[RMDB]
RNA sequence: GGGAACGACUCGAGUAGAGUCGAAAAUAAAUAAAUAAAGUAACAUACCACGCUAAUUGUAUGGCGAAACCGGUAAGCCCGCUGAAAAGAGGACCACCAGGGCUAUAGAAAACUAAAAUAAAAUAAAGCAUAAUUAAUGGUUCGCCAUUAAUUAUGCAAAAGAAACAACAACAACAAC
Reactivity to 2A3 in 0.01 (KOAc 150mM, MgCl2 10mM, bicine 150mM(pH8.5), 24C), signal-to-noise 1, nucleotides 027 to 126: u120a010a070a000u060a080a040a000u300a040a300a000g030u160a220a000c040a020u180a010c040c000a060c090g000c000u020a110a060u140u300g080u160a120u010g020g000c010g040a260a040a000c020c120g000g000u000a060a000g000c000c040c000g080c300u140g000a000a060a000a000g030a040g000g090a060c060c000a040c000c020a050g000g000g040c000u000a000u060a000g120a000a010a010a010c020u100a300a000a000a130u110a110a300a000a200u110a050a070a050